[RMDB]
RNA sequence: GGGAACGACUCGAGUAGAGUCGAAAACCGAUAUUCGUAUCGGCAAUUUCCUAAGUCGGAUCAAACUUGCCGAAGAACGGGAGGACCUCGGAAACGAGGUCCGAAGAACGGGAGGCAAGCUAGAUCCGAUAUGGACAAAGGGCCCCUUCGGGGGCAAUGAUAAUCCUUUUUUCGAAAAGGAUUAUCAAAAAGAAACAACAACAACAAC
Reactivity to DMS in 0.01 (KOAc 150mM, MgCl2 10mM, bicine 150mM(pH8.5), 24C), signal-to-noise 1, nucleotides 027 to 156: c000c000g050a070u000a030u000u000c230g030u000a010u000c000g040g010c020a150a120u010u000u010c000c000u010a070a190g030u000c010g010g000a050u000c010a020a210a050c000u080u030g050c040c000g030a300a220g010a100a240c020g000g000g000a300g020g000a040c010c000u030c010g030g000a130a040a300c000g030a060g000g070u000c000c040g000a090a150g010a090a300c000g030g000g020a300g010g010c000a000a010g000c000u000a300g000a010u000c000c000g000a000u000a010u000g000g010a140c040a090a150a150g060g000g000c000c000c000c060u000u000c300g090g000g010g070g040c010a010a010
Reactivity to 2A3 in 0.01 (KOAc 150mM, MgCl2 10mM, bicine 150mM(pH8.5), 24C), signal-to-noise 1, nucleotides 027 to 156: c000c010g000a010u020a030u030u080c260g000u040a010u010c000g030g010c010a040a070u050u030u070c000c000u040a120a020g010u010c000g010g050a000u000c010a000a060a040c000u000u010g000c010c030g110a130a040g000a000a000c010g000g000g000a020g000g010a000c000c000u000c000g010g070a040a070a040c020g010a000g040g000u000c000c020g020a000a000g000a000a000c000g000g010g020a010g010g000c000a010a000g000c000u010a010g010a000u000c000c000g000a000u000a000u000g010g000a010c040a020a120a050g170g040g000c070c040c020c000u020u100c300g110g000g000g000g070c000a010a040